This 177-nucleotide RNA was probed chemically with 2A3 and DMS.
RNA sequence: GGGAACGACUCGAGUAGAGUCGAAAAUGGCGGGAGGAAGGCAAGGCUGACAUCAUCCCCGGCGUCCUCUUCAUAGAUGAGGUGCACAUGCUGGACGUGGAAUGCUUCAGUUUCCUGAACCGGGCGCGAUGAUAACAUCCUUCGGGAUGUUAUCAUCAAAAGAAACAACAACAACAAC
Reactivity to 2A3 in 0.01 (KOAc 150mM, MgCl2 10mM, bicine 150mM(pH8.5), 24C), signal-to-noise 3, nucleotides 027 to 126: u150g090g030c040g030g020g000a030g040g010a290a010g000g070c040a020a030g050g000c030u030g030a010c010a040u060c030a050u020c010c000c000c020g020g000c000g010u050c010c000u030c010u080u040c100a220u120a170g090a080u060g020a030g020g010u110g070c070a040c010a110u170g000c010u040g010g040a040c060g040u120g000g060a140a040u040g010c020u000u020c010a040g000u010u050u060c010c000u030g000a050a040c050c020g010g040g000c100g000c030
Reactivity to DMS in 0.01 (KOAc 150mM, MgCl2 10mM, bicine 150mM(pH8.5), 24C), signal-to-noise 3, nucleotides 027 to 126: u010g020g020c040g010g000g010a090g000g000a110a040g000g010c120a070a050g010g030c010u010g010a060c090a060u010c110a080u000c040c040c020c090g000g000c020g020u000c010c010u030c050u020u000c070a090u020a100g010a050u010g000a040g010g020u010g000c130a100c170a070u000g010c030u000g000g010a060c090g000u010g000g010a080a050u010g000c100u010u000c040a080g020u000u010u000c040c020u000g010a090a120c060c050g010g000g020c110g020c140
Conditions: 150 mM KOAc, 10 mM MgCl2 and 150 mM bicine (pH 8.5), 24 C.
For DMS the reverse transcriptase was MarathonRT.
2A3 adducts were read by reverse transcription with SuperScript II with manganese.